[RMDB]
RNA sequence: GGGAACGACUCGAGUAGAGUCGAAAACACUGGGUCUGGUAUGGGGGGCACAGACCAAGCACGUACUUCCUGCCCCAUAGCUGCAGUUCAGAAGCUCAGUCCAAGAUGCAGUGAUUUGUGGUGACACUGAAUCAAAGGCCACAGUGACAAGUCCAGGCUAUGUGGUUACAUUCGUGUAACCACAUAGAAAAGAAACAACAACAACAAC
Reactivity to DMS in 0.01 (KOAc 150mM, MgCl2 10mM, bicine 150mM(pH8.5), 24C), signal-to-noise 3, nucleotides 027 to 156: c060a070c000u000g030g040g020u010c020u000g040g000u000a060u000g020g010g040g040g060g020c170a120c060a060g010a090c050c040a060a040g020c050a150c150g010u010a060c080u000u000c040c020u000g000c000c040c000c030a060u010a050g010c030u000g020c020a080g020u000u000c050a150g000a140a210g010c010u000c070a140g010u000c000c050a060a260g010a060u000g010c010a020g060u000g010a120u000u000u000g030u000g040g030u020g000a250c030a040c030u000g030a050a040u000c060a060a140a120g010g020c030c030a100c030a030g010u000g010a130c050a050a090g010u000c030c040a100g000g040
Reactivity to 2A3 in 0.01 (KOAc 150mM, MgCl2 10mM, bicine 150mM(pH8.5), 24C), signal-to-noise 5, nucleotides 027 to 156: c020a000c020u040g000g000g020u020c010u050g010g080u150a120u120g060g000g010g000g050g000c050a040c060a050g030a000c070c030a010a010g030c060a030c120g070u130a050c010u040u050c010c020u030g040c000c020c000c000a000u020a000g010c010u020g010c040a060g020u050u080c030a050g070a140a020g040c020u010c100a050g090u020c030c010a050a020g020a040u040g030c010a000g020u010g090a100u040u090u180g090u050g030g020u020g020a020c020a010c060u030g040a020a040u100c060a110a050a050g010g000c000c010a110c000a060g020u040g030a040c040a120a040g020u020c020c030a010g070g000